[RMDB]
RNA sequence: GGGAACGACUCGAGUAGAGUCGAAAAGAUAUGGAAGCGAAGAACGCGAUAAGUGCCCAUCGGAAACGAUGGAGCACUUUUGACGCGUUCCGCUUCCUAAGUCAAACGUGGUCCUUCGGGACCACGACAUACACAAAGCGUUCGCGCUUUGUGUAUGAAAAGAAACAACAACAACAAC
Reactivity to DMS in 0.01 (KOAc 150mM, MgCl2 10mM, bicine 150mM(pH8.5), 24C), signal-to-noise 6, nucleotides 027 to 126: g000a030u000a210u010g000g000a020a010g010c000g000a210a230g010a010a010c000g030c000g010a120u010a020a010g010u000g000c000c000c000a000u000c000g010g000a060a040a080c000g020a020u000g000g000a120g010c000a010c000u000u000u000u010g010a180c120g010c000g000u000u000c010c000g000c000u000u000c000c000u000a010a070g000u000c010a090a100a240c040g030u000g010g010u000c000c010u000u010c230g020g000g010a010c000c000a000c000g000a110
Reactivity to 2A3 in 0.01 (KOAc 150mM, MgCl2 10mM, bicine 150mM(pH8.5), 24C), signal-to-noise 4, nucleotides 027 to 126: g000a000u020a010u090g010g000a000a010g000c020g050a260a080g020a150a210c030g030c110g040a060u150a300a000g000u000g000c010c000c000a010u010c000g000g000a040a020a020c020g000a000u000g010g030a020g000c000a010c000u010u000u010u040g040a020c030g000c010g010u000u000c000c000g000c000u000u000c000c010u000a010a000g020u000c030a090a060a050c020g000u010g000g000u010c020c000u050u070c300g080g000g000a000c000c000a000c000g000a010